An RNA of 177 nucleotides, treated with 2A3 and DMS and read out base by base.
Source: RMDB library OK1LIB, as collected in RNAgym.
Values cover nucleotides 27 to 126.
Conditions: 150 mM KOAc, 10 mM MgCl2 and 150 mM bicine (pH 8.5), 24 C.
As a SHAPE reagent, 2A3 marks flexible, mostly unpaired nucleotides at the ribose 2'-OH.
RNA sequence: GGGAACGACUCGAGUAGAGUCGAAAAGAAGCGUAAUCGCAAGUUAUGAAGCGGGGAUUGUGGUGAAUAUCAACCUGACAGAGCGAUCGGCAAUCAAGAAGCUUCCGGCGAACAACGCCUAUAGAAAGGGAUAUAUAUUCUUCGGAAUAUAUAUCCCAAAAGAAACAACAACAACAAC
Reactivity to 2A3 in 0.01 (KOAc 150mM, MgCl2 10mM, bicine 150mM(pH8.5), 24C), signal-to-noise 7, nucleotides 027 to 126: g100a070a000g000c000g010u040a030a030u030c010g010c070a060a070g030u180u150a220u230g020a020a000g010c010g000g080g090g000a020u020u020g010u040g100g070u110g090a160a020u110a040u180c030a030a100c020c030u030g040a070c050a090g070a010g060c080g030a060u050c010g040g000c020a010a010u010c010a030a080g070a090a010g040c000u030u000c010c020g030g010c000g010a020a020c030a030a010c030g010c010c010u120a100u060a120g200a060a090a060
Reactivity to DMS in 0.01 (KOAc 150mM, MgCl2 10mM, bicine 150mM(pH8.5), 24C), signal-to-noise 8, nucleotides 027 to 126: g000a120a160g010c000g020u010a090a150u000c000g030c010a040a140g030u020u040a090u040g000a020a030g030c020g000g010g010g000a020u000u000g000u000g010g020u010g010a180a100u050a100u020c060a060a140c040c020u000g000a090c120a180g010a090g000c160g010a140u010c040g000g010c020a010a030u000c020a080a110g010a110a120g000c010u000u000c010c050g010g000c010g000a040a040c170a160a040c010g010c000c030u020a140u030a090g010a090a130a120